An RNA of 177 nucleotides, treated with DMS and 2A3 and read out base by base. The reactions ran in a buffer of 150 mM KOAc, 10 mM MgCl2 and 150 mM bicine (pH 8.5), at 24 C. The DMS profile rests on 1,045 reads. For DMS the reverse transcriptase was MarathonRT. The 2A3 profile rests on 1,093 reads. For 2A3 the reverse transcriptase was SuperScript II with manganese.
RNA sequence: GGGAACGACUCGAGUAGAGUCGAAAAUGUUCCGCAGGCAUCUAGUGCAUAUUUUCGGUUAUGAUUUUCCACAACACUACGGCGAGGUAAUGCAGCUCGUUCUGGAUCGCACGUCGGAUCAGAAACAGCUCGAUGCUAAUUUCGAUUAGCAUCGAGCAAAAGAAACAACAACAACAAC
Reactivity to DMS in 0.01 (KOAc 150mM, MgCl2 10mM, bicine 150mM(pH8.5), 24C), signal-to-noise 1, nucleotides 027 to 126: u000g020u000u000c040c030g060c180a180g000g000c030a070u000c010u000a060g000u000g010c010a060u000a060u000u010u000u000c080g000g000u000u000a080u000g000a050u010u010u010u020c030c030a120c120a020a050c060a030c060u000a060c120g030g060c030g000a110g000g030u010a000a120u000g040c030a120g000c040u000c030g060u010u000c010u000g000g000a060u000c050g000c060a130c130g000u000c010g020g020a050u000c030a030g000a120a030a090c150a090
Reactivity to 2A3 in 0.01 (KOAc 150mM, MgCl2 10mM, bicine 150mM(pH8.5), 24C), signal-to-noise 1, nucleotides 027 to 126: u080g020u020u040c010c000g020c060a010g000g070c000a030u000c060u060a040g080u060g090c010a020u010a140u100u070u040u120c140g080g000u100u080a100u120g120a130u080u020u060u040c030c010a060c020a100a000c030a030c040u100a040c010g040g000c010g000a040g050g000u070a150a030u070g060c030a020g030c010u030c060g010u130u000c020u010g060g040a040u010c060g000c050a040c060g040u070c000g020g050a040u070c040a050g140a030a130a020c050a040